RNA sequence: GGGAACGACUCGAGUAGAGUCGAAAAAGAACUAGCGAUUGUAAAAGGCUGUUUGCGCUAAGAUAUGGAAUAAGCGCAAAUAGGUCCGAAUUCCUUGAUAACAUUUCGGACAACCGCGCUAAAACAAAGUUAUCACAAUGUUCGCAUUGUGAUAACUAAAAGAAACAACAACAACAAC
Reactivity to DMS in 0.01 (KOAc 150mM, MgCl2 10mM, bicine 150mM(pH8.5), 24C), signal-to-noise 3, nucleotides 027 to 126: a050g000a120a140c160u000a080g000c030g040a070u000u000g020u010a070a090a170a100g000g000c020u000g010u000u000u000g000c000g010c010u000a060a080g000a120u010a180u000g000g020a080a120u010a070a030g010c000g020c000a000a010a010u010a010g010g010u000c000c000g010a000a020u000u000c120c070u000u000g020a060u000a100a100c150a100u020u000u000c010g000g000a020c000a070a090c060c020g000c000g000c080u000a020a050a040a060c160a030a020
Reactivity to 2A3 in 0.01 (KOAc 150mM, MgCl2 10mM, bicine 150mM(pH8.5), 24C), signal-to-noise 3, nucleotides 027 to 126: a010g040a030a030c030u000a000g000c010g060a070u070u210g090u200a020a110a020a040g080g020c000u010g000u010u000u020g000c000g000c000u020a090a030g050a230u150a130u260g130g010a130a080u190a130a020g000c000g000c010a010a000a000u000a010g030g010u000c000c000g000a000a020u050u070c030c020u070u130g070a040u070a110a060c040a130u020u050u030c010g010g000a000c000a030a020c040c000g040c010g000c020u040a060a100a000a020c040a010a160